Record summary: An RNA of 177 nucleotides, treated with 2A3 and DMS and read out base by base. The 2A3 profile rests on 1,345 reads. The DMS profile rests on 2,035 reads. The RNA was probed in 150 mM KOAc, 10 mM MgCl2 and 150 mM bicine (pH 8.5) at 24 C.
[RMDB]
RNA sequence: GGGAACGACUCGAGUAGAGUCGAAAAGCAAUUGCAAUCACCACUAGAGUAGUACGCUCGCUCAGUCAUUCCGAGAAGAAGGAGCAAGCUUAUAAAGCAAGUAAAUUAUUCUUUGAAAGGCUUAGAGCCGUUAAAGCACGUUCGCGUGCUUUAACGGAAAAGAAACAACAACAACAAC
Reactivity to 2A3 in 0.01 (KOAc 150mM, MgCl2 10mM, bicine 150mM(pH8.5), 24C), signal-to-noise 3, nucleotides 027 to 126: g050c050a090a300u260u280g010c050a080a070u160c060a160c090c000a070c090u120a030g010a020g080u090a010g030u020a060c110g020c040u000c010g080c010u030c030a000g010u000c000a020u010u000c010c020g010a000g000a030a000g010a030a000g050g030a030g050c030a020a010g010c000u060u150a110u210a250a130a000g020c000a030a020g000u040a040a030a020u050u040a040u020u050c000u070u000u000g060a060a070a000g010g030c020u060u050a030g010a030g070
Reactivity to DMS in 0.01 (KOAc 150mM, MgCl2 10mM, bicine 150mM(pH8.5), 24C), signal-to-noise 2, nucleotides 027 to 126: g000c090a230a110u050u020g000c010a080a190u060c080a160c020c030a070c140u000a100g000a060g000u000a080g030u010a150c190g000c000u000c040g000c000u000c010a030g000u000c000a080u000u000c000c010g000a110g010a010a020g000a020a080g000g020a300g000c000a040a300g010c000u000u040a120u040a060a050a060g000c040a000a260g030u000a020a020a100u050u040a000u000u000c020u010u010u000g000a060a040a050g000g000c000u020u020a100g000a060g000